Conditions: 150 mM KOAc, 10 mM MgCl2 and 150 mM bicine (pH 8.5), 24 C. An RNA of 177 nucleotides, treated with 2A3 and DMS and read out base by base. Reactivities are given for positions 27 through 126.
RNA sequence: GGGAACGACUCGAGUAGAGUCGAAAAGACUUUUAGGUUUAUUGCUGUAAUGUGUGAGACCCUCAGCUACGGCGACUGGGGACUAUAAGUUUCAGGAAGGAGGGGGCUAUAACAGGUCUGUGAUGCCUUCUAAUCCCGCAUUCGUGCGGGAUUAGAAAAAAGAAACAACAACAACAAC
Reactivity to 2A3 in 0.01 (KOAc 150mM, MgCl2 10mM, bicine 150mM(pH8.5), 24C), signal-to-noise 1, nucleotides 027 to 126: g070a080c120u210u120u060u130a080g010g020u000u000u000a010u040u090g000c000u080g130u110a140a190u130g120u060g000u030g290a070g000a220c000c000c000u020c070a000g050c090u030a070c150g140g000c050g000a000c010u130g000g000g000g000a000c000u000a000u140a140a080g000u000u080u000c060a020g000g130a030a030g050g020a170g000g000g000g000g040c090u130a030u000a230a020c000a000g100g000u000c000u010g080u000g010a000u160g000c000c050
Reactivity to DMS in 0.01 (KOAc 150mM, MgCl2 10mM, bicine 150mM(pH8.5), 24C), signal-to-noise 1, nucleotides 027 to 126: g010a040c030u000u000u040u000a160g020g000u010u000u020a060u040u000g000c010u020g000u000a090a050u030g000u010g010u000g010a040g030a150c050c000c000u000c040a010g010c020u030a090c040g050g000c000g000a120c070u000g010g000g010g000a030c050u000a140u020a050a090g000u000u020u000c040a060g010g000a030a050g010g020a060g060g000g000g010g000c030u030a050u010a100a090c090a040g050g000u010c030u000g010u000g020a060u020g000c050c010
Source information: The DMS profile rests on 1,919 reads. DMS adducts were read by reverse transcription with MarathonRT.